[RMDB]
RNA sequence: GGGAACGACUCGAGUAGAGUCGAAAAGUCUAGCGAACGGAUCCCACCCGGGAUACACGCAAGUCGCGAAUUAAGCCGACCGGCCAAGGUCAAUCGCAGAACUCAACUGCAUGAGUAAGCUAGACGAAGGUAGUAUGAGGUUCGCCUCAUACUACCUAAAAGAAACAACAACAACAAC
Reactivity to 2A3 in 0.01 (KOAc 150mM, MgCl2 10mM, bicine 150mM(pH8.5), 24C), signal-to-noise 2, nucleotides 027 to 126: g000u000c000u010a000g000c010g010a090a010c000g070g030a020u030c000c000c010a050c020c040c010g000g000g000a020u020a130c070a020c100g000c020a030a030g090u070c040g000c000g050a050a120u230u100a210a000g040c020c030g050a010c020c040g040g070c100c040a080a070g030g010u020c020a010a060u040c020g010c010a020g020a180a100c040u070c200a080a130c050u040g010c020a030u080g020a000g090u010a050a000g000c010u000a000g000a020c040g020a010
Reactivity to DMS in 0.01 (KOAc 150mM, MgCl2 10mM, bicine 150mM(pH8.5), 24C), signal-to-noise 3, nucleotides 027 to 126: g000u000c020u000a000g020c010g030a210a120c030g000g000a050u010c000c000c010a160c300c070c260g000g020g000a140u000a090c090a070c080g000c050a060a040g000u000c110g010c030g000a060a080u000u000a110a110g020c080c090g010a070c020c060g000g000c090c080a140a140g000g010u000c020a080a030u020c040g010c010a060g000a020a070c120u020c200a070a230c060u010g000c090a080u010g010a160g020u000a090a300g000c010u020a010g030a000c000g010a120
An RNA of 177 nucleotides, treated with 2A3 and DMS and read out base by base.
Reactivities are given for positions 27 through 126.
For DMS, 1,332 sequencing reads were counted.
The reactions ran in a buffer of 150 mM KOAc, 10 mM MgCl2 and 150 mM bicine (pH 8.5), at 24 C.